[RMDB]
RNA sequence: GGGAACGACUCGAGUAGAGUCGAAAACGCCGCCACGACGGAAUCCCGCGACUCGGCAUUCUCGGUGCGCCGUACGGCGGCGGCGAAUUCAGCGGGCGAUUCCGGAUCGAAAAACCACGCUUGCCCGCCGCUGACUUCGCGGAAUAUGGGAAUGUCGCCAACUUGAUUACUUCGGUAAUCAAGUUGGAAAAGAAACAACAACAACAAC
Reactivity to 2A3 in 0.01 (KOAc 150mM, MgCl2 10mM, bicine 150mM(pH8.5), 24C), signal-to-noise 1, nucleotides 027 to 156: c060g070c010c000g000c080c150a140c070g200a020c010g000g060a020a090u050c030c010c040g030c040g130a090c080u090c040g020g000c010a000u000u000c010u010c000g090g000u110g040c050g000c000c040g030u090a100c010g040g050c000g010g000c000g000g000c020g030a090a110u300u100c020a040g000c040g030g000g050c020g000a000u020u170c060c060g050g050a110u120c050g130a090a000a010a090a090c020c040a140c020g080c030u030u090g000c000c000c000g000c030c000g060c010u020g030a110c040u040u070c130g010c010g000g080a070a050u150a180u160g000g000g000a000a010u000g000u000c000g000

Structure probing data (2A3) for a 207-nucleotide construct. Source: RMDB library OK3TST, as collected in RNAgym. The 2A3 profile rests on 500 reads. The reactions ran in a buffer of 150 mM KOAc, 10 mM MgCl2 and 150 mM bicine (pH 8.5), at 24 C. Reactivities are given for positions 27 through 156.